Conditions: 150 mM KOAc, 10 mM MgCl2 and 150 mM bicine (pH 8.5), 24 C.
The record gives the reactivity of an RNA of 207 nucleotides to 2A3 and DMS.
For DMS the reverse transcriptase was MarathonRT.
The DMS profile rests on 3,900 reads.
For 2A3, 3,114 sequencing reads were counted.
For 2A3 the reverse transcriptase was SuperScript II with manganese.
It was measured as part of the RMDB library OK3TST.
RNA sequence: GGGAACGACUCGAGUAGAGUCGAAAAUCGGUAGCGCGCUGGCGCUUACUGGCAUCAUCGGUGCAAUUGGUCUUGUAGCCUGGCCGGUUAUCACCGGCAUCAAUGCCAUCAUCGCGGUAGCAGGCGCAAUGGGGGCAAUCUUCACGACGGUUGGCAGCAUAGCUAUCCAAUUCGUUGGAUAGCUAUGAAAAGAAACAACAACAACAAC
Reactivity to 2A3 in 0.01 (KOAc 150mM, MgCl2 10mM, bicine 150mM(pH8.5), 24C), signal-to-noise 3, nucleotides 027 to 156: u060c010g020g010u020a010g000c020g000c000g050c240u150g170g000c000g000c020u060u080a020c020u020g040g000c010a040u020c020a050u100c080g040g000u040g010c030a060a080u060u080g050g000u070c030u060u050g040u120a040g030c000c030u050g050g000c010c030g000g000u080u160a130u140c130a010c020c000g000g000c010a010u130c070a030a040u040g030c010c020a030u090c010a030u170c060g030c030g070g000u010a020g040c060a030g050g000c000g000c030a020a050u070g000g000g010g000g000c000a020a030u030c050u110u100c040a040c100g110a030c010g010g030u020u010g020g030c010a000g030
Reactivity to DMS in 0.01 (KOAc 150mM, MgCl2 10mM, bicine 150mM(pH8.5), 24C), signal-to-noise 1, nucleotides 027 to 156: u000c040g000g020u000a050g010c030g020c010g060c140u000g030g030c010g020c010u000u000a010c020u000g020g030c020a060u010c050a100u000c010g070g040u000g030c110a060a080u010u000g040g000u000c060u000u020g000u000a100g010c030c020u000g040g000c000c000g050g000u000u000a130u000c130a170c010c000g040g030c060a050u020c050a050a080u000g000c010c010a110u000c030a070u010c050g020c080g040g010u010a090g030c040a040g020g050c070g000c030a070a100u000g010g020g060g070g030c050a060a050u000c060u000u000c060a050c020g000a060c000g000g010u000u000g020g000c010a090g000